[RMDB]
RNA sequence: GGGAACGACUCGAGUAGAGUCGAAAAUGUCUUAGUCUUACCUGAUUUAGAAUUCAGCAAAGCAGUUCACGUGAGGGCUGGCAGGAGCUGAUAUCUCCCUCUCUUCUUUCCUUUGGCAUUGCUCUAUAUUGCUUGUGUAUUCAUACGGGGCAAGAGGCAUUACGUUGCUGUUCGCAGCAACGUAAUGAAAAGAAACAACAACAACAAC
Reactivity to 2A3 in 0.01 (KOAc 150mM, MgCl2 10mM, bicine 150mM(pH8.5), 24C), signal-to-noise 4, nucleotides 027 to 156: u170g040u020c020u040u080a060g010u040c030u100u080a100c020c030u060g030a100u050u040u080a060g030a050a070u040u030c010a010g000c060a100a040a030g020c010a010g020u060u060c080a060c230g090u130g090a220g000g060g010c030u050g110g030c010a020g050g090a010g000c020u020g040a020u030a050u090c070u010c000c010c010u050c000u010c020u080u000c010u040u050u050c000c000u110u080u130g050g000c020a060u020u090g010c010u000c000u040a100u030a050u190u070g030c030u080u050g040u030g020u100a110u040u070c030a000u040a130c030g000g030g020g000c020a010a010g010a020g070g000
Reactivity to DMS in 0.01 (KOAc 150mM, MgCl2 10mM, bicine 150mM(pH8.5), 24C), signal-to-noise 2, nucleotides 027 to 156: u010g000u000c030u000u000a100g010u010c040u000u000a060c030c020u000g000a110u000u000u000a130g020a110a240u000u000c000a110g010c020a080a150a140g020c030a100g020u000u000c050a090c130g000u000g000a120g000g010g030c040u000g020g070c030a080g010g000a150g050c050u010g010a150u000a080u000c020u000c020c010c020u000c030u000c030u000u000c050u010u000u000c010c010u000u020u000g010g020c030a060u000u010g010c020u010c030u000a080u010a080u000u000g030c020u010u000g000u040g000u010a060u000u000c050a080u000a110c070g000g010g030g000c020a050a050g000a180g010g020